An RNA of 177 nucleotides, treated with 2A3 and DMS and read out base by base. The DMS profile rests on 5,693 reads. DMS adducts were read by reverse transcription with MarathonRT. The data come from the RNA Mapping Database (RMDB), library OK1LIB. The reactions ran in a buffer of 150 mM KOAc, 10 mM MgCl2 and 150 mM bicine (pH 8.5), at 24 C.
RNA sequence: GGGAACGACUCGAGUAGAGUCGAAAAGAAUGACUUGCAUUAGUCAUGCGCUAAUCCAUUACAACACAGACUUUAGUGCCUUCAGGUAAGAUUGAACGAGCGCAGCACUAUUUAGAAGAGUGUGUUACAGCAGUAAUAGCUUCGGCUAUUACUGCUGAAAAGAAACAACAACAACAAC
Reactivity to 2A3 in 0.01 (KOAc 150mM, MgCl2 10mM, bicine 150mM(pH8.5), 24C), signal-to-noise 6, nucleotides 027 to 126: g100a020a030u080g000a030c020u060u090g030c130a150u100u060a010g010u020c000a020u050g010c050g000c020u070a080a020u020c010c000a060u110u170a080c060a110a000c000a010c020a020g170a050c010u050u020u040a010g000u000g020c010c000u010u040c030a030g160g110u190a190a030g030a180u110u140g030a040a020c050g010a040g050c020g000c010a000g000c000a000c010u030a050u070u190u070a050g030a150a010g060a030g040u030g000u010g010u010u070a060
Reactivity to DMS in 0.01 (KOAc 150mM, MgCl2 10mM, bicine 150mM(pH8.5), 24C), signal-to-noise 4, nucleotides 027 to 126: g020a120a070u000g030a030c010u000u010g000c280a120u020u000a000g010u000c000a030u000g010c070g000c010u010a110a110u020c050c020a120u020u030a100c200a060a010c010a020c030a060g000a080c020u020u000u010a010g000u000g000c010c040u010u020c040a070g000g010u000a110a130g000a130u020u000g000a080a050c300g010a050g030c030g000c040a210g010c000a030c000u000a040u020u020u050a240g020a040a010g000a090g000u000g010u000g020u010u000a200